This 177-nucleotide RNA was probed chemically with DMS and 2A3.
2A3 adducts were read by reverse transcription with SuperScript II with manganese.
Reactivities are given for positions 27 through 126.
The 2A3 profile rests on 1,034 reads.
DMS adducts were read by reverse transcription with MarathonRT.
DMS (dimethyl sulfate) methylates the pairing face of unpaired adenines and cytosines.

[RMDB]
RNA sequence: GGGAACGACUCGAGUAGAGUCGAAAAGCCUUUUGGAGAUGAUCAUGGCCGGGCCGGGGAAGCGAAGAGCUUCCAAGAUUUGUGUCAGUCCUGCCGCGAGAGCGAGAGACGCCAUAAAGGGAGCGCGAACUUGUCCCUGAUUCGUCAGGGACAAGUUAAAAGAAACAACAACAACAAC
Reactivity to DMS in 0.01 (KOAc 150mM, MgCl2 10mM, bicine 150mM(pH8.5), 24C), signal-to-noise 2, nucleotides 027 to 126: g010c000c010u000u000u010u020g000g000a130g000a030u010g010a070u010c070a060u010g000g000c030c060g000g000g030c050c000g000g010g000g030a000a010g000c020g010a120a120g000a300g010c000u000u000c030c010a050a040g000a080u040u000u010g010u010g030u010c050a110g000u000c020c040u010g000c060c030g010c100g010a110g000a070g020c030g040a100g010a110g030a070c080g080c080c020a070u060a030a080a090g000g010g000a110g030c050g010c080g000
Reactivity to 2A3 in 0.01 (KOAc 150mM, MgCl2 10mM, bicine 150mM(pH8.5), 24C), signal-to-noise 2, nucleotides 027 to 126: g030c000c010u040u030u030u170g080g000a060g010a050u190g010a000u060c070a040u070g030g060c040c000g030g010g030c040c060g110g000g070g000a000a000g000c020g020a090a030g070a140g140c000u000u000c000c000a000a000g050a050u060u110u160g080u100g050u060c000a030g000u000c040c000u010g000c000c000g000c000g000a070g000a000g050c020g040a080g000a020g020a040c040g010c020c000a020u130a080a020a000g000g040g020a080g020c080g000c010g000